[RMDB]
Source information: Chemical mapping of a 207-nucleotide RNA with 2A3. For 2A3, 1,350 sequencing reads were counted. For 2A3 the reverse transcriptase was SuperScript II with manganese.
RNA sequence: GGGAACGACUCGAGUAGAGUCGAAAACUCAAUGUAGGGAAUAACAUUGAAUUGAUACAAAUACCUUUUUCGGUGCAGGGAAAAACACCGAAUUGAUACAAAUACCUUUCUCAAUGUAGGGAAUAACAAAACAGGCAUCGCUUCGGCGAUGCCUGAACUCGUAUCUGAAGUUCGCUUCAGAUACGAGAAAAGAAACAACAACAACAAC
Reactivity to 2A3 in 0.01 (KOAc 150mM, MgCl2 10mM, bicine 150mM(pH8.5), 24C), signal-to-noise 2, nucleotides 027 to 156: c000u010c020a010a040u080g050u120a090g020g110g060a100a100u100a060a030c010a010u020u010g020a070a100u070u150g050a080u120a240c100a030a150a010u140a080c020c000u030u060u020u000u030c000g000g010u000g010c040a050g100g010g030a060a100a000a000a000c010a000c000c000g040a030a010u040u080g010a000u020a090c060a020a160a000u120a070c000c000u030u070u030c060u050c050a030a100u120g020u060a060g010g010g070a030a050u080a170a040c120a030a000a010a020c020a000g030g000c000a000u000c000g030c030u120u070c210g010g010c010g020a000u000g020c020c000u010g000a000a000